[RMDB]
Structure probing data (DMS and 2A3) for a 177-nucleotide construct. The 2A3 profile rests on 5,147 reads. For DMS the reverse transcriptase was MarathonRT. The RNA was probed in 150 mM KOAc, 10 mM MgCl2 and 150 mM bicine (pH 8.5) at 24 C.
RNA sequence: GGGAACGACUCGAGUAGAGUCGAAAAGUGGGAGUACUCAUACGCUUGAAAUCGAGUGUAGUAUUCUCAAAGCGUCCAGUAAGUUGGAGUGUCCUGAUCCAAUUCAGGCUAAACUGGACAUUACGGCACAUCCUUCGAAAUUCGUUUCGAAGGAUGUAAAAGAAACAACAACAACAAC
Reactivity to DMS in 0.01 (KOAc 150mM, MgCl2 10mM, bicine 150mM(pH8.5), 24C), signal-to-noise 6, nucleotides 027 to 126: g030u010g000g000g010a020g030u000a000c010u030c180a240u010a100c010g010c050u000u020g010a160a170a090u040c040g000a250g030u000g010u010a030g000u000a000u000u000c000u000c000a030a120a100g020c140g020u000c000c000a000g000u010a070a050g010u010u000g010g000a140g010u010g000u010c000c000u010g010a070u010c120c140a040a100u020u010c040a050g000g020c050u010a020a090a040c000u000g010g000a010c000a080u030u020a050c080g000g010c230
Reactivity to 2A3 in 0.01 (KOAc 150mM, MgCl2 10mM, bicine 150mM(pH8.5), 24C), signal-to-noise 6, nucleotides 027 to 126: g140u070g000g010g000a000g020u020a010c000u030c110a110u050a100c020g030c030u020u060g130a150a140a100u300c090g000a010g000u020g000u000a010g000u000a000u010u000c030u000c000a050a030a000g060c050g000u000c000c000a000g000u050a120a050g040u080u170g090g020a130g040u080g050u090c000c000u020g070a020u020c060c070a040a040u160u030c020a030g080g000c020u060a120a040a020c000u000g000g000a000c000a000u090u150a040c050g050g000c060